[RMDB]
RNA sequence: GGGAACGACUCGAGUAGAGUCGAAAACAGGUCGAUAGUACCAAUAACCCUGGUACCAAUAAGGUACUAUCGACCAUUUAGCUCUUCUUCUACAACACGCUCGCUGAAGAAGAGCGUUUCUGGUACCAGGGAAGCGAGCGUAAGGCCGAGAGGCCGAACUAAUGGCUAUGUUCGCAUAGCCAUUAGUAAAAGAAACAACAACAACAAC
Reactivity to DMS in 0.01 (KOAc 150mM, MgCl2 10mM, bicine 150mM(pH8.5), 24C), signal-to-noise 2, nucleotides 027 to 156: c040a120g030g030u010c010g020a020u000a010g020u000a000c010c020a220a160u000a110a100c000c000c030u000g020g010u010a030c000c000a110a110u020a120a160g010g030u000a000c010u000a000u010c020g000a030c000c010a010u000u000u000a140g000c000u000c000u010u000c010u000u000c010u010a070c050a050a090c040a060c030g020c030u000c020g050c040u000g000a100a040g000a090a030g000a020g010c000g050u000u000u010c140u000g010g030u000a010c020c000a010g000g000g010a000a010g000c030g010a030g070c030g020u000a110a140g030g030c000c000g040a260g000a300g000g010c010c000g010a070
Reactivity to 2A3 in 0.01 (KOAc 150mM, MgCl2 10mM, bicine 150mM(pH8.5), 24C), signal-to-noise 4, nucleotides 027 to 156: c030a020g000g020u010c010g010a000u000a000g020u010a020c010c060a050a130u200a170a150c000c000c000u010g010g000u000a010c020c020a080a130u160a230a120g000g000u000a000c000u000a000u000c000g010a000c000c000a010u020u040u100a010g000c000u000c000u010u000c000u010u000c020u080a090c040a210a030c050a060c040g000c000u000c000g010c010u000g010a000a010g000a000a000g000a000g000c000g000u040u210u050c050u050g000g000u010a000c000c000a000g000g000g000a000a000g000c000g000a000g000c000g010u020a030a060g000g000c010c000g020a030g000a030g060g000c000c000g010a000